Record summary
An RNA of 177 nucleotides, treated with DMS and read out base by base. Values cover nucleotides 27 to 126.
RNA sequence: GGGAACGACUCGAGUAGAGUCGAAAACAGACGUUGUGCCUGGCGCUGGGAAAGAGUUGACUAGGACAGCAUCCCUUUCCUCAAAGGGCUCCUAGACUAGGGAGAGGGCCGGACAUCUGAAUACAUCUGAUAGGGGACGAUUCGUCGUCCCCUAUCAAAAAGAAACAACAACAACAAC
Reactivity to DMS in 0.01 (KOAc 150mM, MgCl2 10mM, bicine 150mM(pH8.5), 24C), signal-to-noise 2, nucleotides 027 to 126: c090a060g050a120c160g030u010u000g000u000g000c020c010u020g000g020c060g010c060u000g000g000g020a040a050a040g000a030g010u010u000g020a080c050u030a090g000g030a160c210a090g000c050a110u010c020c000c000u000u000u000c010c000u020c080a120a080a070g010g010g000c020u000c040c010u000a100g000a090c150u000a120g000g000g000a060g000a090g000g000g010c060c020g000g000a050c020a020u010c030u000g010a120a070u000a080c120a100u020c130